An RNA of 177 nucleotides, treated with 2A3 and DMS and read out base by base. 2A3 adducts were read by reverse transcription with SuperScript II with manganese.

RNA sequence: GGGAACGACUCGAGUAGAGUCGAAAAGAUAUGGAUCAUUCUUGGAGGUGUUCGGAAACGAAUACACCGAUGAAGAGACUGAUCCUAAGUCAAAAGUAGUAUUUUCGCUUCGGCGAAAAUACUACAAGUAGCGUAUGUUCUUCGGAACAUACGCUACAAAAGAAACAACAACAACAAC
Reactivity to 2A3 in 0.01 (KOAc 150mM, MgCl2 10mM, bicine 150mM(pH8.5), 24C), signal-to-noise 1, nucleotides 027 to 126: g040a020u030a010u160g020g000a010u000c000a000u010u000c010u020u020g010g020a020g000g000u000g000u060u030c000g000g060a070a050a060c020g000a010a030u210a180c010a010c010c010g300a300u030g030a020a040g000a000g000a010c020u020g000a010u000c000c000u030a170a030g030u040c030a090a000a020a140g000u000a010g010u000a000u020u000u020u030c000g020c010u090u110c300g060g080c000g000a010a000a000a030u000a000c010u020a000c000a000a000
Reactivity to DMS in 0.01 (KOAc 150mM, MgCl2 10mM, bicine 150mM(pH8.5), 24C), signal-to-noise 1, nucleotides 027 to 126: g000a050u000a300u000g000g000a000u000c000a020u000u000c000u000u010g000g000a070g020g000u000g010u010u010c030g000g020a070a100a260c020g030a010a060u030a090c000a010c010c010g000a030u070g020a150a200g000a000g010a030c110u000g000a000u020c000c000u000a050a130g010u000c020a080a090a150a110g010u000a010g000u000a010u010u000u010u000c000g000c000u010u020c260g040g000c000g000a000a000a000a000u000a010c000u010a000c000a030a070